This 177-nucleotide RNA was probed chemically with DMS. The RNA was probed in 150 mM KOAc, 10 mM MgCl2 and 150 mM bicine (pH 8.5) at 24 C. For DMS, 1,438 sequencing reads were counted. DMS adducts were read by reverse transcription with MarathonRT.
RNA sequence: GGGAACGACUCGAGUAGAGUCGAAAAAAAAAAGAUAUGGACAGCUACCCACCGCAAGAAGAGCGACGAAGAAAGCUCGGAAACGAGCUUUCAGAGCUCCACUGCGAGGCUGUCCUAAGUCAAAAAACGUAUUAAUAUUGUUCGCAAUAUUAAUACGAAAAGAAACAACAACAACAAC
Reactivity to DMS in 0.01 (KOAc 150mM, MgCl2 10mM, bicine 150mM(pH8.5), 24C), signal-to-noise 2, nucleotides 027 to 126: a000a040a020a050a060a100g000a100u010a100u000g030g010a000c000a000g010c010u000a160c000c040c020a300c050c020g020c000a000a090g000a160a260g000a030g000c000g020a180c270g000a110a060g000a030a030a010g050c000u000c020g000g000a040a050a180c010g040a000g030c010u000u000u000c020a020g000a120g000c000u000c000c040a230c070u000g000c000g020a050g010g010c000u000g000u010c000c000u000a000a070g040u040c080a000a090a050a090a030a090